[RMDB]
RNA sequence: GGGAACGACUCGAGUAGAGUCGAAAACACGUGAUUCGUCACGUGGUUGCGGGGUCAAGCGUUGAAAUCGACCAACAGCUAUACUGAAGCCUCCACGGUAUAGACAUGGCCGAUGGAGCUUGACGGAGGCACCCUCACCGAAGUGUUCGCACUUCAAAUUUCGGAGUAAAUUCGUUUACUCCGAAAUAAAAGAAACAACAACAACAAC
Reactivity to 2A3 in 0.01 (KOAc 150mM, MgCl2 10mM, bicine 150mM(pH8.5), 24C), signal-to-noise 5, nucleotides 027 to 156: c000a000c000g010u010g000a030u040u120c240g030u030c140a000c000g000u020g010g010u060u120g060c090g000g090g050g000u020c010a000a010g000c010g110u160u030g020a010a010a010u010c000g010a020c020c010a040a070c110a120g030c000u000a000u000a010c000u020g080a220a050g040c000c010u010c000c000a020c000g010g000u010a000u000a000g230a080c100a120u030g000g000c000c000g000a010u010g010g010a010g000c000u010u000g000a050c010g010g010a000g000g010c000a050c010c010c010u080c050a100c040c100g000a020a010g000u010g020u100u180c220g060c070a000c000u000u000c000a120a110
Reactivity to DMS in 0.01 (KOAc 150mM, MgCl2 10mM, bicine 150mM(pH8.5), 24C), signal-to-noise 2, nucleotides 027 to 156: c020a000c010g000u000g010a020u000u010c260g030u000c010a010c000g040u000g000g010u000u030g000c010g010g000g030g000u010c000a030a050g040c010g010u010u000g020a150a180a040u010c000g000a020c020c000a070a140c120a130g020c010u000a040u010a020c000u030g010a040a100g010c010c010u000c000c010a300c020g000g000u000a020u000a010g020a140c070a280u000g000g020c020c000g000a050u000g000g000a170g010c010u000u010g010a040c010g000g050a050g040g020c030a270c040c020c030u010c110a170c190c130g000a030a020g000u000g010u000u010c110g020c030a030c000u010u010c020a050a200

An RNA of 207 nucleotides, treated with 2A3 and DMS and read out base by base. In probing experiments dimethyl sulfate is read out at A N1 and C N3, which are open when not base-paired. The data come from the RNA Mapping Database (RMDB), library RNAMAK. The RNA was probed in 150 mM KOAc, 10 mM MgCl2 and 150 mM bicine (pH 8.5) at 24 C. For DMS the reverse transcriptase was MarathonRT.